Annotation:
This 207-nucleotide RNA was probed chemically with 2A3. Values cover nucleotides 27 to 156. Reactivities are rounded to 0.1 and cut off at 0 and 3. The reactions ran in a buffer of 150 mM KOAc, 10 mM MgCl2 and 150 mM bicine (pH 8.5), at 24 C.
RNA sequence: GGGAACGACUCGAGUAGAGUCGAAAAAACACUUGAACAACACUGUCAACCAACUCAGUCUAAUUGACAUUUUUAGAACCCUACACCUACCUAAUAAUUUCAGAAUACACAUUGUUUACAAGGUCACAUGUAACAUUUGCCAAGGGAAACCACCAGCCCGUCUUGAAGUUUUCGAACUUCAAGACGGAAAAGAAACAACAACAACAAC
Reactivity to 2A3 in 0.01 (KOAc 150mM, MgCl2 10mM, bicine 150mM(pH8.5), 24C), signal-to-noise 2, nucleotides 027 to 156: a020a010c060a030c040u030u060g030a050a000c020a050a000c000a050c030u020g010u040c020a050a030c060c000a040a070c050u030c110a030g070u020c020u090a110a000u050u040g000a020c030a090u020u000u060u070u080a060g020a040a020c000c000c000u000a010c040a050c010c020u080a070c010c030u020a160a060u040a080a080u120u170u130c050a070g080a100a030u170a080c050a010c050a120u030u050g040u030u100u120a060c100a110a060g050g000u010c010a050c000a070u130g020u150a070a030c020a140u090u070u110g010c000c000a050a020g060g010g040a020a060a000c000c000a020c050c000a020g030c000